[RMDB]
RNA sequence: GGGAACGACUCGAGUAGAGUCGAAAAGAUAUGGACGAAGAACAUCUGUGGCGUUUGACGACGGUCGGAAACGACCGUCCGAGCCACGAUGGGAGUCCUAAGUCAAAGGGCCCGUUCGCGGGCCCAACCAGAUAAAGUGGUUCGCCACUUUAUCUGGAAAAGAAACAACAACAACAAC
Reactivity to DMS in 0.01 (KOAc 150mM, MgCl2 10mM, bicine 150mM(pH8.5), 24C), signal-to-noise 1, nucleotides 027 to 126: g000a060u000a300u050g010g000a010c000g030a090a160g000a150a210c010a000u010c000u010g100u000g000g000c010g000u000u040u020g030a150c300g030a000c000g040g010u000c010g010g000a060a080a090c050g010a010c000c010g010u000c010c000g000a120g010c000c010a010c000g010a000u040g000g010g010a130g000u000c000c010u000a040a140g000u000c010a040a150a190g000g010g020c000c000c030g050u010u010c230g010c020g010g000g040c000c000c010a000a010
Reactivity to 2A3 in 0.01 (KOAc 150mM, MgCl2 10mM, bicine 150mM(pH8.5), 24C), signal-to-noise 2, nucleotides 027 to 126: g000a000u060a050u140g000g000a030c040g160a300a250g040a120a040c010a010u000c120u300g000u020g030g000c090g000u090u300u300g040a040c050g010a000c000g060g000u000c020g020g050a050a080a100c030g000a000c010c010g010u000c010c000g010a000g010c010c000a000c010g000a010u000g010g000g010a020g000u010c000c000u030a180a060g010u070c010a060a090a260g000g020g030c170c140c030g090u070u060c290g000c050g080g000g020c080c000c010a020a060
Record summary: Chemical mapping of a 177-nucleotide RNA with DMS and 2A3. Values cover nucleotides 27 to 126. 2A3 adducts were read by reverse transcription with SuperScript II with manganese. For DMS, 850 sequencing reads were counted.